[RMDB]
An RNA of 207 nucleotides, treated with DMS and 2A3 and read out base by base. Conditions: 150 mM KOAc, 10 mM MgCl2 and 150 mM bicine (pH 8.5), 24 C. The DMS profile rests on 1,699 reads. It was measured as part of the RMDB library M2RFOK.
RNA sequence: GGGAACGACUCGAGUAGAGUCGAAAAUACUUAGUACGCGCGUAGUUGCAGGCAUUCCGGGUGCAGCAACUGACGCGGAAGACUUUGCCCAGAGUGUGCGCUUCAACUGGCGUGCUGAGUAGUGCACGAAUUGCACGUACGUUCGCGUACGUGCAAAGUUCCCCUGUCAAUUCGUUGACAGGGGAACAAAAGAAACAACAACAACAAC
Reactivity to DMS in 0.01 (KOAc 150mM, MgCl2 10mM, bicine 150mM(pH8.5), 24C), signal-to-noise 1, nucleotides 027 to 156: u030a050c050u000u010a020g010u010a110c000g020c010g020c050g050u000a050g030u000u020g040c010a240g050g000c000a030u000u000c010c300g000g060g100u000g020c090a300g060c020a020a050c000u000g040a010c070g000c050g000g000a080a200g000a070c040u000u000u010g000c000c010c000a240g000a080g000u000g010u000g050c030g030c030u000u000c020a070a130c170u000g020g000c030g000u030g050c010u000g030a020g000u000a110g050u000g010c080a050c050g000a120a170u000u000g030c000a000c000g040u020a000c010g000u010u000c300g020c030g030u000a010c010g000u040g000c000a000a010a070
Reactivity to 2A3 in 0.01 (KOAc 150mM, MgCl2 10mM, bicine 150mM(pH8.5), 24C), signal-to-noise 3, nucleotides 027 to 156: u060a000c000u010u000a010g000u020a000c010g000c000g000c050g050u010a000g010u030u010g000c050a090g110g000c000a010u070u040c060c120g200g040g020u010g020c020a010g030c020a030a020c020u060g180a040c040g000c000g020g010a050a000g120a030c050u070u080u130g040c020c000c010a010g010a010g010u120g010u030g010c040g000c050u050u060c050a230a210c090u020g000g000c020g010u000g000c000u000g000a010g000u050a000g070u050g020c020a020c060g040a080a090u050u000g010c000a000c000g000u000a000c000g000u030u070c140g000c000g140u000a000c000g010u000g000c000a000a010a000